The record gives the reactivity of an RNA of 177 nucleotides to 2A3 and DMS. Source: RMDB library OK1LIB, as collected in RNAgym. 2A3 adducts were read by reverse transcription with SuperScript II with manganese. Conditions: 150 mM KOAc, 10 mM MgCl2 and 150 mM bicine (pH 8.5), 24 C.
RNA sequence: GGGAACGACUCGAGUAGAGUCGAAAAGAGGAUCUGGGAUGCUAUUAACGAUCCGAUUAUGGGAUGGAUUGUAAAUGCUACGCGAUCGCGAUGGGGUAAGUUCAAACCCUGGAUCCUGAUCGGUACGCGCGUAUAAUCCAUUCGUGGAUUAUACGCGAAAAGAAACAACAACAACAAC
Reactivity to 2A3 in 0.01 (KOAc 150mM, MgCl2 10mM, bicine 150mM(pH8.5), 24C), signal-to-noise 6, nucleotides 027 to 126: g100a010g030g010a050u050c060u100g050g000g050a070u130g140c050u110a110u260u130a110a060c040g010a010u000c000c000g020a050u110u110a160u260g140g000g030a060u110g000g010a000u020u030g030u060a050a090a040u090g060c010u020a010c040g040c010g300a040u070c050g020c080g020a040u060g000g000g000g000u040a130a060g080u180u160c160a190a040a130c020c000c000u020g040g030a010u030c000c010u020g010a020u040c030g000g020u040a050c100g000
Reactivity to DMS in 0.01 (KOAc 150mM, MgCl2 10mM, bicine 150mM(pH8.5), 24C), signal-to-noise 6, nucleotides 027 to 126: g000a150g010g010a020u000c010u010g010g010g020a120u010g010c080u020a080u020u020a090a090c110g010a010u000c010c000g010a130u030u020a090u020g000g000g010a070u030g000g000a030u000u020g020u000a040a040a100u010g000c010u010a060c030g010c050g010a040u020c030g010c270g000a060u010g000g000g000g010u010a040a130g000u040u040c260a090a070a060c020c000c010u000g000g010a090u000c000c010u010g010a020u010c020g000g010u010a040c180g020